[RMDB]
RNA sequence: GGGAACGACUCGAGUAGAGUCGAAAAUGUGGCUCAGCAGGUCACUCCGAAUGACCAUGCUAAUGCCAGAGCUUUUUCGCAUCUGGCUAGUAAACUGAUCGAACAUGAGAUCCCCACCUCAGUUACGGAAAGACUCUAUCUUCGGAUAGAGUCUUUCAAAAGAAACAACAACAACAAC
Reactivity to 2A3 in 0.01 (KOAc 150mM, MgCl2 10mM, bicine 150mM(pH8.5), 24C), signal-to-noise 2, nucleotides 027 to 126: u060g000u020g020g000c010u020c150a000g010c050a020g050g000u000c000a020c010u030c040c040g030a080a090u030g000a000c020c000a050u060g000c000u030a080a060u090g010c010c000a000g000a000g010c010u100u170u130u160u300c100g010c050a270u000c020u010g010g010c000u020a030g000u020a020a090a040c020u040g050a050u100c030g070a070a030c030a140u040g000a030g020a060u060c000c000c000c000a030c000c020u050c030a050g030u010u060a050c030g040
Reactivity to DMS in 0.01 (KOAc 150mM, MgCl2 10mM, bicine 150mM(pH8.5), 24C), signal-to-noise 2, nucleotides 027 to 126: u000g030u000g020g020c160u010c050a010g020c090a080g000g010u000c020a040c130u000c200c200g000a200a170u000g000a030c010c030a240u000g000c010u000a040a160u010g010c000c000a010g020a010g010c000u020u010u010u030u010c150g030c000a170u010c000u010g000g030c000u000a010g000u000a070a210a100c010u010g000a080u000c040g000a090a040c030a040u000g000a050g030a080u000c020c000c000c040a060c050c020u000c040a050g010u000u010a090c260g010

The record gives the reactivity of an RNA of 177 nucleotides to 2A3 and DMS. The DMS profile rests on 1,270 reads. The 2A3 profile rests on 1,312 reads. For 2A3 the reverse transcriptase was SuperScript II with manganese. DMS adducts were read by reverse transcription with MarathonRT.